[RMDB]
RNA sequence: GGGAACGACUCGAGUAGAGUCGAAAACCUCAAGCUGGCGGCCAGGUACAUCGACUUCCUCUACCAGGUCCUCCAGAGCGACGAGCUGGACUCCAAGAUGGCAAGCUGCAGCUAUGUGGCUCACGAGCGGCUCAGCUACGCCUUCUCGGUCUGGAGAUCACUAGGAUGGUUUCGACCAUCCUAGUGAAAAAGAAACAACAACAACAAC
Reactivity to DMS in 0.01 (KOAc 150mM, MgCl2 10mM, bicine 150mM(pH8.5), 24C), signal-to-noise 1, nucleotides 027 to 156: c080c020u000c030a090a190g050c030u000g050g000c220g020g040c000c050a040g020g020u000a110c110a070u060c070g000a110c100u000u000c060c030u000c010u000a070c040c030a150g010g020u010c040c020u020c000c000a120g000a270g090c040g040a050c040g000a210g000c010u000g000g010a300c010u000c000c020a110a070g010a100u000g020g030c020a200a000g020c000u000g010c120a070g020c060u000a040u000g030u010g110g050c000u010c060a150c060g000a080g020c130g000g000c030u000c020a000g020c000u010a090c060g000c000c010u010u010c000u000c060g010g080u000c050u000g030g000a130g010a170
Reactivity to 2A3 in 0.01 (KOAc 150mM, MgCl2 10mM, bicine 150mM(pH8.5), 24C), signal-to-noise 2, nucleotides 027 to 156: c010c020u070c050a030a010g030c050u030g030g000c040g020g000c050c010a030g000g010u050a050c030a240u170c130g120a090c110u170u090c030c020u020c000u000a020c000c020a050g010g030u070c000c000u000c000c000a010g000a010g040c030g120a170c000g020a020g020c020u090g020g060a070c010u000c020c030a010a000g000a030u020g000g010c010a010a010g000c010u020g040c050a020g000c010u100a090u260g250u160g100g030c000u040c080a070c210g050a020g040c010g030g000c000u010c000a000g000c000u060a010c160g000c010c000u010u010c020u010c010g060g020u020c020u020g050g000a040g000a060